[RMDB]
RNA sequence: GGGAACGACUCGAGUAGAGUCGAAAAUGAAACUGUGGGUAUUGGCAAACAAAAGUCAUUGGAAAGCCAGUUUGCCGAACUGAAAGCUGAUGAUGAAAUUAGCAACCAACUGGCCGCACUGAAAGCAAUCCGGUCUAACAUUCGUGUUAGACCGGAUAAAAGAAACAACAACAACAAC
Reactivity to DMS in 0.01 (KOAc 150mM, MgCl2 10mM, bicine 150mM(pH8.5), 24C), signal-to-noise 1, nucleotides 027 to 126: u020g020a090a050a110c090u000g000u030g040g000g000u000a090u020u010g040g020c040a040a070a070c100a070a060a150a190g000u000c040a200u000u000g000g010a090a200a150g020c040c050a060g000u000u000u000g020c050c050g020a050a050c160u000g010a050a150a030g000c000u000g000a150u030g000a080u000g000a100a050a080u000u000a030g000c120a020a080c110c080a050a060c120u000g020g010c030c070g020c110a030c030u000g000a080a090a140g000c110a060